[RMDB]
An RNA of 177 nucleotides, treated with DMS and 2A3 and read out base by base. The RNA was probed in 150 mM KOAc, 10 mM MgCl2 and 150 mM bicine (pH 8.5) at 24 C.
RNA sequence: GGGAACGACUCGAGUAGAGUCGAAAAGUGUUGGGUUUACAAUAUCGAUUAAACGUUUGUGUGUACGUUGUUCGAAUUGUUCACGUGAAUCUUUAUACUUAUGCACGGCACGGAUGAUUGUGUAAACCCUGAUCCUAAAAUUCGUUUUAGGAUCAGGAAAAGAAACAACAACAACAAC
Reactivity to DMS in 0.01 (KOAc 150mM, MgCl2 10mM, bicine 150mM(pH8.5), 24C), signal-to-noise 9, nucleotides 027 to 126: g020u010g010u010u000g000g000g010u000u000u000a010c010a060a080u000a140u000c020g000a030u000u000a050a030a110c020g010u000u010u010g020u010g020u010g020u000a020c030g010u000u000g010u010u010c070g010a040a100u000u000g010u000u000c120a100c200g010u010g000a040a040u010c100u000u010u000a060u000a060c060u010u000a050u000g010c020a040c040g000g010c110a050c080g010g000a140u000g010a080u000u000g010u000g010u000a030a050a080c120
Reactivity to 2A3 in 0.01 (KOAc 150mM, MgCl2 10mM, bicine 150mM(pH8.5), 24C), signal-to-noise 6, nucleotides 027 to 126: g090u090g050u090u080g040g030g010u010u030u020a010c020a030a050u050a120u160c020g010a020u060u180a150a060a020c030g020u020u070u110g150u050g030u040g040u050a010c010g000u000u020g040u020u050c020g020a070a050u100u080g050u060u060c100a050c170g080u070g040a020a030u000c010u040u180u070a100u030a060c010u070u060a020u130g030c020a000c000g040g010c060a000c030g030g010a050u090g010a050u080u110g030u010g000u060a030a040a020c000